[RMDB]
RNA sequence: GGGAACGACUCGAGUAGAGUCGAAAAGAUAUGGAGCUGGUCAGCUUUGAUCGUACUGUGUCGGAAACGACAUUACGGGAGCUGUCAGCUCCUAAGUCAAAGUGAUUGGGUCUUCGGACCCAAUCACGAAUGGCAGAAUGUUCGCAUUCUGCCAUUCAAAAGAAACAACAACAACAAC
Reactivity to 2A3 in 0.01 (KOAc 150mM, MgCl2 10mM, bicine 150mM(pH8.5), 24C), signal-to-noise 3, nucleotides 027 to 126: g000a000u010a000u050g010g000a000g000c010u020g020g130u300c090a000g010c000u300u300u060g010a020u010c000g010u010a020c100u090g000u020g000u080c000g010g000a010a010a000c000g000a000c000a010u030u000a000c000g000g020g020a030g000c000u010g020u040c000a000g000c000u000c010c000u010a000a000g000u000c020a060a080a080g010u000g010a000u000u000g020g000g000u030c000u080u120c300g070g000a000c000c000c000a000a000u000c000a000c010
Reactivity to DMS in 0.01 (KOAc 150mM, MgCl2 10mM, bicine 150mM(pH8.5), 24C), signal-to-noise 4, nucleotides 027 to 126: g000a020u000a030u030g000g010a020g020c010u000g000g000u020c030a020g020c000u010u000u010g000a040u000c000g000u000a010c300u020g010u000g010u000c000g020g020a010a020a050c000g010a010c000a020u000u000a000c000g010g010g000a000g040c000u010g010u010c030a010g000c000u010c000c000u000a000a070g000u000c020a140a140a210g010u000g000a010u000u000g010g000g020u000c000u000u000c270g050g010a010c010c000c000a000a000u000c000a000c010